[RMDB]
RNA sequence: GGGAACGACUCGAGUAGAGUCGAAAAGUGAACUCGAUGCUGAGCAGCCUGCUCGUCAGCGAGGGCGACCGCCGCCGCGUGCAGCUCGAAGUCGAGCGGCAGCAGGCCGAAGGCGUCGUGGUCGACGGCAUGUCAGCCUAUUCGUAGGCUGACAUGCAAAAGAAACAACAACAACAAC
Reactivity to 2A3 in 0.01 (KOAc 150mM, MgCl2 10mM, bicine 150mM(pH8.5), 24C), signal-to-noise 2, nucleotides 027 to 126: g120u050g060a020a020c010u010c010g020a010u010g000c040u050g010a080g110c030a010g000c010c000u010g000c010u030c110g050u040c040a020g010c040g040a140g090g040g010c010g020a160c050c150g030c070c020g160c020c020g030c040g030u110g070c080a040g000c010u010c020g090a300a060g170u250c030g020a000g000c000g020g000c000a010g000c010a000g000g000c000c010g010a050a020g010g000c000g000u000c010g000u030g010g000u020c020g020a050c010g070
Reactivity to DMS in 0.01 (KOAc 150mM, MgCl2 10mM, bicine 150mM(pH8.5), 24C), signal-to-noise 3, nucleotides 027 to 126: g000u010g000a060a030c010u000c020g010a050u000g000c020u010g000a200g020c260a130g010c100c030u000g030c000u000c090g000u000c050a080g010c000g000a070g000g010g010c040g020a150c180c200g010c020c020g000c020c050g000c030g000u010g030c090a090g010c000u010c010g000a190a130g010u000c030g010a030g010c040g000g020c030a050g010c010a040g000g020c000c050g010a180a260g010g010c000g020u010c010g020u010g000g000u010c010g010a130c140g020
Overview: This 177-nucleotide RNA was probed chemically with 2A3 and DMS. Reactivities are given for positions 27 through 126. 2A3 adducts were read by reverse transcription with SuperScript II with manganese. The reactions ran in a buffer of 150 mM KOAc, 10 mM MgCl2 and 150 mM bicine (pH 8.5), at 24 C.